Chemical mapping of a 177-nucleotide RNA with DMS and 2A3.
Conditions: 150 mM KOAc, 10 mM MgCl2 and 150 mM bicine (pH 8.5), 24 C.
For 2A3 the reverse transcriptase was SuperScript II with manganese.
Source: RMDB library TTRDES, as collected in RNAgym.
Values cover nucleotides 27 to 126.
RNA sequence: GGGAACGACUCGAGUAGAGUCGAAAAGAUAUGGAAAGCCCUAAGGGAGAAGUUGGUCGGAAACGACCGUCAGCUUCGACGAUCUUAUGGCUUUCCUAAGUCAAAGAGCUAUCUUCGGAUAGCUCAACACUGCAAUAGUGUUCGCACUAUUGCAGUGAAAAGAAACAACAACAACAAC
Reactivity to DMS in 0.01 (KOAc 150mM, MgCl2 10mM, bicine 150mM(pH8.5), 24C), signal-to-noise 4, nucleotides 027 to 126: g010a050u010a300u000g000g000a010a000a010g010c000c000c110u000a010a020g000g000g000a020g010a020a000g020u010u010g020g010u000c000g020g010a090a140a230c140g010a040c000c050g000u000c220a060g020c000u000u010c010g000a060c270g000a050u010c010u000u000a020u000g000g020c000u000u010u000c000c000u000a010a080g000u000c030a100a130a140g010a010g000c000u010a000u000c010u000u010c250g020g010a010u000a000g010c000u000c000a040a140
Reactivity to 2A3 in 0.01 (KOAc 150mM, MgCl2 10mM, bicine 150mM(pH8.5), 24C), signal-to-noise 4, nucleotides 027 to 126: g010a010u040a010u100g000g000a040a000a000g000c020c010c010u010a010a000g050g020g010a040g010a020a000g030u170u170g060g060u230c040g020g030a200a150a160c140g090a110c030c000g000u090c040a010g020c020u010u000c010g110a190c000g010a020u010c000u000u000a010u030g000g000c000u010u000u020c000c000u000a020a010g040u010c030a130a050a150g000a010g000c000u000a000u010c000u040u080c260g070g000a010u000a020g000c000u000c000a000a000